[RMDB]
RNA sequence: GGGAACGACUCGAGUAGAGUCGAAAAGCGUUGGGUGAAUUGUCGGCGACUACACACCUAGGUACUGUCACGCGGCAUGGAAGCGCCGGGGACAGGGCCCGCAGUGGGUCGCAGUGGCGUUUGACGCCGCACUACGUCACUUCGGUGACGUAGUGCGAAAAGAAACAACAACAACAAC
Reactivity to DMS in 0.01 (KOAc 150mM, MgCl2 10mM, bicine 150mM(pH8.5), 24C), signal-to-noise 2, nucleotides 027 to 126: g060c130g010u020u000g000g010g020u000g010a080a140u040u040g000u000c030g000g000c000g000a030c010u030a060c000a110c010a130c100c070u020a170g000g000u010a030c010u030g010u000c000a170c010g040c000g010g020c000a070u000g000g010a140a170g000c200g000c010c000g000g010g010g000a010c000a030g000g000g010c060c010c190g000c200a090g000u010g000g000g000u000c000g020c010a030g030u010g000g010c000g020u010u020u040g000a040c030g030c030
Reactivity to 2A3 in 0.01 (KOAc 150mM, MgCl2 10mM, bicine 150mM(pH8.5), 24C), signal-to-noise 4, nucleotides 027 to 126: g080c080g010u070u040g050g100g050u140g090a170a130u140u100g040u040c040g030g020c000g000a020c020u270a140c080a000c020a020c010c040u030a020g010g010u040a040c030u020g020u030c080a070c300g170c020g020g000c050a160u230g120g190a130a030g120c060g000c110c000g040g060g050g020a000c000a010g000g030g000c000c010c010g000c050a040g010u060g010g040g000u000c000g000c000a000g050u040g040g000c020g000u000u100u220g050a050c010g000c000